[RMDB]
RNA sequence: GGGAACGACUCGAGUAGAGUCGAAAAGAUAUGGAUUGCCUACCCACCGCUCGUGAACGCUUUGAUCUGCAACUUUCGGAAACGAAAGUUGCAGGGAGCGUACUCUGAGCGAGGGCAAUCCUAAGUCGCACCUAAUAUAGUUCGCUAUAUUAGGUGCAAAAGAAACAACAACAACAAC
Reactivity to 2A3 in 0.01 (KOAc 150mM, MgCl2 10mM, bicine 150mM(pH8.5), 24C), signal-to-noise 6, nucleotides 027 to 126: g150a120u300a260u300g000g020a010u010u010g020c000c040u210a300c240c020c000a010c010c010g000c000u010c010g030u020g040a060a010c000g020c030u300u300u160g090a120u110c000u000g010c000a000a010c010u000u010u010c010g040g050a120a090a090c010g010a010a000a000g000u000u000g000c000a000g000g000g000a000g000c000g000u040a030c020u000c170u300g010a000g000c000g010a010g000g000g000c000a000a000u020c000c000u000a060a040g260u180c130
Reactivity to DMS in 0.01 (KOAc 150mM, MgCl2 10mM, bicine 150mM(pH8.5), 24C), signal-to-noise 3, nucleotides 027 to 126: g010a110u010a150u000g010g010a010u010u000g000c010c010u020a180c030c030c040a300c110c000g000c000u010c000g000u000g010a090a020c000g020c000u000u000u020g000a080u000c000u000g000c000a000a010c000u000u000u010c000g000g000a080a120a210c010g000a020a000a010g000u000u000g020c000a000g000g000g010a000g000c000g000u000a020c030u000c000u020g010a020g010c010g000a040g000g000g000c000a010a020u010c000c010u000a030a110g000u020c160
An RNA of 177 nucleotides, treated with 2A3 and DMS and read out base by base. Conditions: 150 mM KOAc, 10 mM MgCl2 and 150 mM bicine (pH 8.5), 24 C. Values are in units of 0.01, from 0 to 300, in steps of 10. Source: RMDB library TTRINS, as collected in RNAgym. DMS adducts were read by reverse transcription with MarathonRT.